Notes: Structure probing data (DMS) for a 177-nucleotide construct. Source: RMDB library TTRDEL, as collected in RNAgym. Conditions: 150 mM KOAc, 10 mM MgCl2 and 150 mM bicine (pH 8.5), 24 C. Reactivities are rounded to 0.1 and cut off at 0 and 3. DMS adducts were read by reverse transcription with MarathonRT. Values cover nucleotides 27 to 126.

RNA sequence: GGGAACGACUCGAGUAGAGUCGAAAAGAUAUGGAGAAGUAGACAUGAUCGAUUGGGUCGGAAACGACCUAGAGAUCAACAGCUACAUGCUCCUAAGUCGGGGGCUGAGGCGUUCGCGCCUCAGCAAUCCCCAAAGCUUCUUCGGAAGCUUUGGGGAAAAAGAAACAACAACAACAAC
Reactivity to DMS in 0.01 (KOAc 150mM, MgCl2 10mM, bicine 150mM(pH8.5), 24C), signal-to-noise 1, nucleotides 027 to 126: g020a020u000a300u000g020g000a000g040a060a020g030u000a000g000a040c010a170u020g000a020u000c020g000a300u000u010g000g000g050u000c040g040g010a200a110a200c020g090a020c000c000u000a010g000a220g010a000u000c000a010a050c300a180g000c020u000a000c010a040u030g010c000u070c000c000u000a010a170g010u000c000g000g020g000g000g040c000u000g000a020g040g010c000g070u010u010c300g050c000g000c000c000u000c000a000g010c030a090a200